[RMDB]
RNA sequence: GGGAACGACUCGAGUAGAGUCGAAAAGGAUGCCACGUCUCCAAUGUAGAUUACAAUCUGUCCACCUGCCUGUGUAAAGUACUCCAGCGCCUCAAAGCCCAUAGAACUUUGCUCCUCUUGAGGUGAAGCGAUGCUAGCAGUUCGCUGCUAGCAUCGCAAAAGAAACAACAACAACAAC
Reactivity to 2A3 in 0.01 (KOAc 150mM, MgCl2 10mM, bicine 150mM(pH8.5), 24C), signal-to-noise 1, nucleotides 027 to 126: g000g000a030u040g040c020c050a000c010g020u000c010u000c000c000a060a090u120g050u080a000g080a100u170u140a080c010a000a070u020c010u040g070u070c000c000a020c000c040u020g000c000c020u030g000u100g040u180a030a210a150g040u000a060c050u030c000c000a000g010c030g000c020c010u040c000a130a060a150g000c000c000c000a000u050a010g120a120a000c140u110u080u130g000c000u000c010c020u020c020u000u010g090a000g000g060u020g090a210a000